[RMDB]
RNA sequence: GGGAACGACUCGAGUAGAGUCGAAAAGAAACUAUCGUUAGAAAAGAAUGGUGGUGAACGAUAGUUUCUGUGGAAGAAACGCAGGAAAUUUUACCACCAGAAAAAGAAAAGAAAGAAAGAAAAGAAAGGGUAUUCAUAAGUUCGCUUAUGAAUACCCAAAAGAAACAACAACAACAAC
Reactivity to DMS in 0.01 (KOAc 150mM, MgCl2 10mM, bicine 150mM(pH8.5), 24C), signal-to-noise 1, nucleotides 027 to 126: g000a000a000a000c000u000a000u010c000g000u020u030a170g000a170a090a130a090g060a060a140u000g030g020u000g050g000u080g000a000a070c010g000a010u000a000g000u000u000u040c020u000g010u020g030g000a110a110g000a080a040a090c110g000c010a040g000g050a090a050a120u000u000u010u010a060c000c040a010c020c020a080g000a000a160a080a040a010g000a050a090a070a040g000a050a060a030g000a000a060a090g020a070a060a030a140g000a080a080a090
Reactivity to 2A3 in 0.01 (KOAc 150mM, MgCl2 10mM, bicine 150mM(pH8.5), 24C), signal-to-noise 1, nucleotides 027 to 126: g020a000a020a000c000u050a000u000c000g000u030u060a030g110a090a200a030a040g110a150a110u170g000g000u000g000g000u040g040a000a000c000g070a010u050a000g000u000u000u000c000u000g030u080g000g040a140a130g040a010a160a000c000g000c100a030g000g170a000a070a150u060u140u070u060a100c000c000a000c000c000a000g010a000a100a000a000a000g110a050a020a020a000g010a010a000a000g160a070a020a020g090a040a060a000a000g050a060a010a020

Source: RMDB library OK1LIB, as collected in RNAgym. An RNA of 177 nucleotides, treated with DMS and 2A3 and read out base by base. DMS (dimethyl sulfate) methylates the pairing face of unpaired adenines and cytosines.